[RMDB]
Annotation
Chemical mapping of a 177-nucleotide RNA with DMS and 2A3. The RNA was probed in 150 mM KOAc, 10 mM MgCl2 and 150 mM bicine (pH 8.5) at 24 C. Reactivities are given for positions 27 through 126. For 2A3 the reverse transcriptase was SuperScript II with manganese.

RNA sequence: GGGAACGACUCGAGUAGAGUCGAAAAUAAAAUCGUAGGGCGAGACGAUCGACGUAAAUCGCUCAAACUACUCGAGACCAAUGGAAUACGCUUCGGUAACUCGCUCUAAUCCCGAGCGAUAAAUGAAUCAGUGAACGUUAUUCGUAACGUUCACUGAAAAAGAAACAACAACAACAAC
Reactivity to DMS in 0.01 (KOAc 150mM, MgCl2 10mM, bicine 150mM(pH8.5), 24C), signal-to-noise 2, nucleotides 027 to 126: u010a060a100a060a120u000c010g000u000a060g000g030g020c060g030a020g000a050c060g000a030u000c060g000a050c070g000u010a030a060a080u010c070g050c080u000c110a040a070a080c060u020a020c050u000c060g010a040g010a140c060c050a100a090u020g000g010a120a090u000a060c040g010c060u000u000c050g000g010u010a080a100c080u000c010g000c000u000c000u020a060a180u000c110c030c020g030a050g000c000g020a080u020a040a090a120u010g010a070a060
Reactivity to 2A3 in 0.01 (KOAc 150mM, MgCl2 10mM, bicine 150mM(pH8.5), 24C), signal-to-noise 3, nucleotides 027 to 126: u050a000a060a010a040u050c020g000u010a020g020g030g000c000g020a000g010a030c010g000a040u080c030g020a040c000g030u060a010a040a150u100c080g030c060u000c070a000a030a030c020u040a000c020u010c010g030a040g030a060c030c020a000a090u170g020g090a120a080u090a140c020g010c020u030u060c020g000g030u030a030a020c020u000c020g020c000u000c010u020a030a080u060c010c000c000g000a000g000c030g020a040u140a060a110a030u190g110a050a070